Structure probing data (2A3) for a 207-nucleotide construct. Conditions: 150 mM KOAc, 10 mM MgCl2 and 150 mM bicine (pH 8.5), 24 C. The data come from the RNA Mapping Database (RMDB), library ARCHII.
[RMDB]
RNA sequence: GGGAACGACUCGAGUAGAGUCGAAAAGCGGUGUUGAGGAGCGGGUCCUGUGCAACGCGAACCCAUGAACCUGGUCAGGUCCGGAAGGAAGCAGCCAUAAGUGGAUCAUCGCGUGUGCCGCAGGGUAGCCUGCUCUGAGCUGCUACCAUAAGUAACGCGUGUAUGGUUGGUUCGCCAACCAUACACGAAAAGAAACAACAACAACAAC
Reactivity to 2A3 in 0.01 (KOAc 150mM, MgCl2 10mM, bicine 150mM(pH8.5), 24C), signal-to-noise 2, nucleotides 027 to 156: g020c000g040g000u040g040u300u270g090a030g020g000a010g010c000g020g000g020u300c000c000u000g000u010g020c020a010a000c010g000c000g010a020a010c000c000c000a050u060g010a020a070c090c120u010g000g040u110c000a020g000g020u000c010c000g090g110a070a140g020g000a000a000g000c000a000g000c000c000a030u020a120a020g020u010g010g000a010u040c020a000u000c070g010c040g050u000g120u050g030c070c020g060c000a000g010g000g000u010a000g000c010c000u000g010c010u000c010u000g000a000g000c000u010g000c000u020a110c010c010a060u110a150a040g150u140a110a050c090g020